[RMDB]
RNA sequence: GGGAACGACUCGAGUAGAGUCGAAAAGUGUAGCGUCACUUUGAUGGCGGUACUAUGAAUUGAUGCAAGGUGUGGAGCGACCUUAAACAGUUCUGGUGGUGCUCUGAAUGGAGUGCUCUACUGAGAUCAUUACUACGACCUUCGGGUCGUAGUAAUGAAAAGAAACAACAACAACAAC
Reactivity to 2A3 in 0.01 (KOAc 150mM, MgCl2 10mM, bicine 150mM(pH8.5), 24C), signal-to-noise 3, nucleotides 027 to 126: g060u030g010u000a000g050c020g010u030c020a020c030u150u170u210g260a280u040g020g000c020g050g090u000a000c020u020a090u140g100a110a100u160u080g110a110u100g090c070a050a020g000g000u040g000u090g030g020a040g010c030g000a010c000c000u040u080a080a060a030c010a040g000u020u000c010u020g000g050u070g000g080u000g010c020u030c000u080g210a140a080u240g040g000a000g030u020g010c020u000c020u020a030c040u030g080a060g010a130u000
The record gives the reactivity of an RNA of 177 nucleotides to 2A3. Reactivities are given for positions 27 through 126. It was measured as part of the RMDB library RFMREP. The RNA was probed in 150 mM KOAc, 10 mM MgCl2 and 150 mM bicine (pH 8.5) at 24 C. For 2A3 the reverse transcriptase was SuperScript II with manganese.